[RMDB]
RNA sequence: GGGAACGACUCGAGUAGAGUCGAAAAGGAAAUAGGUAUGCGGUCGCUAUUAAAAUAUUGCGACAAACUGGCACACAGCAAGCGAGUGGUGUCGAGUGCACACAAGUCGUUCCCAGCCAGAAAAAAAGAAAGAUAUUCGUUUCGACGAAUAUCUUUCAAAAGAAACAACAACAACAAC
Reactivity to 2A3 in 0.01 (KOAc 150mM, MgCl2 10mM, bicine 150mM(pH8.5), 24C), signal-to-noise 1, nucleotides 027 to 126: g030g010a080a070a130u200a170g040g020u090a060u120g040c090g080g000u010c000g000c060u060a020u070u150a130a030a040a030u260a050u060u090g030c000g010a020c010a010a050a000c030u010g040g010c020a010c020a010c010a020g160c040a110a000g100c070g090a000g090u120g010g070u020g040u020c030g010a030g020u120g000c010a020c000a000c010a030a030g000u000c000g000u020u020c000c000c000a010g000c000c000a010g190a060a070a010a030a020a020a000
Reactivity to DMS in 0.01 (KOAc 150mM, MgCl2 10mM, bicine 150mM(pH8.5), 24C), signal-to-noise 1, nucleotides 027 to 126: g010g000a010a050a020u020a020g000g010u020a090u000g070c040g010g050u000c010g030c000u000a130u010u010a070a140a070a120u000a090u000u000g000c060g020a000c000a080a090a090c090u000g010g000c010a130c050a060c030a070g000c040a070a070g020c080g000a070g020u010g030g000u000g010u010c020g000a080g030u000g030c060a010c020a010c100a060a040g000u010c000g000u000u000c010c000c000a110g020c150c120a030g020a010a010a010a110a040a110a110
The record gives the reactivity of an RNA of 177 nucleotides to 2A3 and DMS. The RNA was probed in 150 mM KOAc, 10 mM MgCl2 and 150 mM bicine (pH 8.5) at 24 C. It was measured as part of the RMDB library M2PK90. For DMS, 679 sequencing reads were counted. Values cover nucleotides 27 to 126.